Source: RMDB library OK3TST, as collected in RNAgym. The record gives the reactivity of an RNA of 207 nucleotides to DMS and 2A3. For 2A3, 839 sequencing reads were counted.
[RMDB]
RNA sequence: GGGAACGACUCGAGUAGAGUCGAAAAGAUUAGCCCGAACAUCCUCACCGGCGACCUCGUGAACCUCUCCGCCGACGCGCUGGCCCAGAUGGAGGCCAGCACUCAGCGAAAGAUGGGCGAGUACGAAACCCUCUUCGGCGAGUCCUGGGAAUCGGCGAAGCAUUGCUCAAUUCGUUGAGCAAUGCUUAAAAGAAACAACAACAACAAC
Reactivity to DMS in 0.01 (KOAc 150mM, MgCl2 10mM, bicine 150mM(pH8.5), 24C), signal-to-noise 1, nucleotides 027 to 156: g020a180u000u010a110g080c010c030c010g000a150a070c100a080u000c020c010u010c000a080c050c020g060g000c070g020a110c050c070u000c010g010u040g020a110a080c010c010u010c050u000c080c000g060c000c010g020a040c110g030c020g000c040u000g010g010c010c020c000a200g000a180u000g040g020a130g020g000c000c000a020g000c080a020c000u010c010a090g040c010g010a060a030a050g010a010u020g050g040g010c020g050a130g040u010a140c120g020a140a170a170c000c000c010u000c010u000u010c010g030g030c000g000a080g020u000c040c050u000g000g010g010a070a050u000c000g040g000c030g020
Reactivity to 2A3 in 0.01 (KOAc 150mM, MgCl2 10mM, bicine 150mM(pH8.5), 24C), signal-to-noise 2, nucleotides 027 to 156: g040a060u140u140a010g060c000c000c000g020a010a070c070a120u020c040c000u050c030a050c000c000g040g020c020g090a070c000c000u070c040g040u040g040a080a100c000c000u000c010u040c030c030g040c000c000g000a030c040g000c000g000c030u010g000g010c000c010c010a120g080a140u240g100g050a100g020g000c020c000a000g000c000a000c000u020c020a030g010c000g030a120a080a000g010a060u230g010g000g010c030g010a020g040u080a120c090g080a030a040a010c020c010c000u080c030u000u030c010g220g010c050g030a010g020u060c020c040u020g020g000g000a000a030u060c080g000g000c000g000
Values cover nucleotides 27 to 156.